[RMDB]
RNA sequence: GGGAACGACUCGAGUAGAGUCGAAAAAAUGAAUACAUUUGUCUAUUCAUUCAUCUGUUUAUUCCUUCGACAGACAUUCAUUAAAUAUAGGAAUUAAAGAGCUCAGGCCCUGGAACUAGAUGCUUCAGGCUUCAAAUUCCAGCUCCAACCAGCUAUAGCUAGUAUAGUGAUUCGUCACUAUACUAGCAAAAGAAACAACAACAACAAC
Reactivity to 2A3 in 0.01 (KOAc 150mM, MgCl2 10mM, bicine 150mM(pH8.5), 24C), signal-to-noise 2, nucleotides 027 to 156: a010a000u030g000a000a000u010a030c040a080u070u170u300g080u100c040u020a000u010u000c000a000u040u070c000a060u010c030u010g080u000u110u040a080u080u020c010c000u060u060c040g040a010c010a060g040a040c000a020u110u130c020a040u030u300a100a150a010u280a080u110a090g000g010a000a010u090u170a190a220a190g080a000g000c020u020c190a020g080g000c060c040c000u010g020g000a000a040c010u020a060g000a080u010g020c010u160u250c090a080g050g020c000u030u000c030a080a060a030u010u000c000c000a010g000c010u000c000c010a070a100c010c030a030g010c040u040a060u120a110

Notes: The record gives the reactivity of an RNA of 207 nucleotides to 2A3. It was measured as part of the RMDB library OK3TST.